[RMDB]
RNA sequence: GGGAACGACUCGAGUAGAGUCGAAAAAUAUUCCUCCACUUUUGGUCCCUCAUUUUACGUGCCAUGUAUGCAGAUUCUGCUGACGUGGUGGAAUGAGGGACCAAAAGUGGAAGAAUCUGACAUUACAUCCACAUAGACGUUUCGACGUCUAUGUGGAAAAAGAAACAACAACAACAAC
Reactivity to DMS in 0.01 (KOAc 150mM, MgCl2 10mM, bicine 150mM(pH8.5), 24C), signal-to-noise 1, nucleotides 027 to 126: a070u040a040u010u000c000c010u000c000c010a030c000u000u000u000u000g010g040u000c000c030c000u000c000a010u000u010u000u030a110c210g020u010g000c000c020a030u000g030u000a080u000g000c010a010g000a250u020u020c030u000g000c000u000g000a100c020g020u000g010g040u020g000g000a010a000u000g010a020g020g000g000a000c000c010a000a000a000a000g000u000g000g000a020a000g010a010a000u000c110u000g000a150c120a100u020u030a090c150a170
Notes: An RNA of 177 nucleotides, treated with DMS and read out base by base. Reactivities are given for positions 27 through 126. The reactions ran in a buffer of 150 mM KOAc, 10 mM MgCl2 and 150 mM bicine (pH 8.5), at 24 C. DMS adducts were read by reverse transcription with MarathonRT.